[RMDB]
RNA sequence: GGGAACGACUCGAGUAGAGUCGAAAAGUCCGUUCGGCGGCUCAGCGCGCGUUGGGGCCUGGAUCCCGGAUACAGUUGAGAAUUCCGUCGAAACUCUCGGCGCGAUUCAAGGCCUGGAUGUGGCGGCCCUUUACCGACCGUUCGCGGUCGGUAAAGGAAAAGAAACAACAACAACAAC
Reactivity to 2A3 in 0.01 (KOAc 150mM, MgCl2 10mM, bicine 150mM(pH8.5), 24C), signal-to-noise 2, nucleotides 027 to 126: g000u020c020c000g000u080u080c070g130g020c050g000g040c060u050c120a060g040c010g000c000g000c010g070u160u010g000g000g000g050c000c000u010g070g000a060u000c050c010c000g010g000a050u160a070c050a070g090u040u030g130a020g040a120a080u200u020c020c050g010u050c010g010a120a070a020c120u110c000u000c050g010g010c040g060c090g040a010u070u120c030a030a060g040g000c020c040u070g080g000a030u040g050u060g110g040c000g010g050c000
Reactivity to DMS in 0.01 (KOAc 150mM, MgCl2 10mM, bicine 150mM(pH8.5), 24C), signal-to-noise 1, nucleotides 027 to 126: g000u000c000c040g000u000u020c040g030g000c110g000g000c000u000c050a050g010c110g030c020g000c110g010u010u030g000g000g000g020c030c010u000g010g080a100u000c000c000c090g070g010a090u000a000c140a170g000u000u010g030a260g000a120a000u030u030c290c020g020u000c030g000a020a120a050c110u010c050u010c100g000g000c090g000c190g020a010u010u030c030a080a180g010g010c030c000u020g020g010a020u000g000u020g000g000c060g000g000c090